[RMDB]
An RNA of 177 nucleotides, treated with DMS and 2A3 and read out base by base. The DMS profile rests on 23,737 reads. Conditions: 150 mM KOAc, 10 mM MgCl2 and 150 mM bicine (pH 8.5), 24 C.

RNA sequence: GGGAACGACUCGAGUAGAGUCGAAAACUGGAGUACGACUCGCAGAGGCAUUGCUCUCGGUGGAGUGAGGCCCUACAUCAGAGUAGGGCCAUGUGGAUCUCAGAGUCGGAGUCCAUUCGGAUCCAGGGCGGUAUGGGUCCUUCGGGAUCUAUAUCGCAAAAGAAACAACAACAACAAC
Reactivity to DMS in 0.01 (KOAc 150mM, MgCl2 10mM, bicine 150mM(pH8.5), 24C), signal-to-noise 6, nucleotides 027 to 126: c060u000g000g000a030g010u020a150c020g000a030c000u000c000g010c110a170g000a020g010g000c020a190u030u040g010c060u010c000u000c050g000g020u010g010g000a020g010u010g010a180g010g010c000c010c000u000a000c000a030u010c050a030g000a050g010u000a000g000g010g010c000c000a010u000g020u010g010g000a070u030c020u000c070a240g020a120g010u020c060g010g000a110g010u000c000c010a070u000u020c090g000g010a140u010c010c000a040g000g000
Reactivity to 2A3 in 0.01 (KOAc 150mM, MgCl2 10mM, bicine 150mM(pH8.5), 24C), signal-to-noise 9, nucleotides 027 to 126: c010u000g000g010a010g030u160a030c000g000a000c010u000c010g040c070a030g000a010g050g020c120a200u080u300g040c040u030c020u020c120g120g050u180g100g020a010g010u040g030a130g020g000c000c000c000u010a010c010a050u150c070a050g030a020g300u000a000g000g020g000c000c000a000u010g000u020g040g080a140u080c010u000c060a060g020a010g110u070c050g020g000a010g030u000c000c000a000u060u080c020g030g010a010u000c000c000a010g010g060
Values cover nucleotides 27 to 126.
For DMS the reverse transcriptase was MarathonRT.
Source: RMDB library OK1LIB, as collected in RNAgym.